[RMDB]
RNA sequence: GGGAACGACUCGAGUAGAGUCGAAAAGGCCCUCAACAUCGGGGAAGGCCUGCAAGUCACAGGCGGAAAGCUACAACUGAAAGUGGGUAAUGGUCUGCGCCUCACCUCUGAGGGCACACUCACGGUUCCCCCCGAGGGACAGAGGCCCAUCAUCACCUAUGCUUCGAUUAUUCGUAAUCGAAGCAUAAAAAGAAACAACAACAACAAC
Reactivity to 2A3 in 0.01 (KOAc 150mM, MgCl2 10mM, bicine 150mM(pH8.5), 24C), signal-to-noise 3, nucleotides 027 to 156: g040g000c030c030c020u040c040a080a220c040a210u130c030g000g000g000g060a060a010g090g030c000c010u010g020c090a160a100g040u140c080a020c020a080g000g030c020g030g010a080a060a010g030c060u130a070c050a180a100c040u160g060a150a080a060g040u030g000g030g030u100a050a070u080g050g020u090c070u050g010c050g160c020c030u080c020a100c020c100u170c090u050g000a010g000g000g130c000a000c010a000c000u090c010a030c020g060g030u080u070c000c010c000c000c000c000g010a050g030g020g000a010c010a020g050a040g030g000c000c010c010a110u080c010a010u050c020a030c090c000
Reactivity to DMS in 0.01 (KOAc 150mM, MgCl2 10mM, bicine 150mM(pH8.5), 24C), signal-to-noise 2, nucleotides 027 to 156: g020g010c000c000c010u000c050a050a050c040a080u000c050g000g030g050g010a160a100g000g020c030c000u000g020c040a100a200g030u020c140a040c010a050g000g020c020g030g020a100a070a130g000c050u020a060c060a110a160c050u000g000a080a140a140g010u010g000g000g000u000a080a120u010g020g010u000c030u000g020c030g000c010c010u000c030a060c100c070u010c070u000g010a270g000g000g000c080a020c040a030c050u030c030a090c090g010g000u000u000c010c010c000c010c000c020g000a050g000g040g020a100c070a110g000a040g000g010c020c020c070a090u000c030a090u000c080a050c010c040
Conditions: 150 mM KOAc, 10 mM MgCl2 and 150 mM bicine (pH 8.5), 24 C. The record gives the reactivity of an RNA of 207 nucleotides to 2A3 and DMS.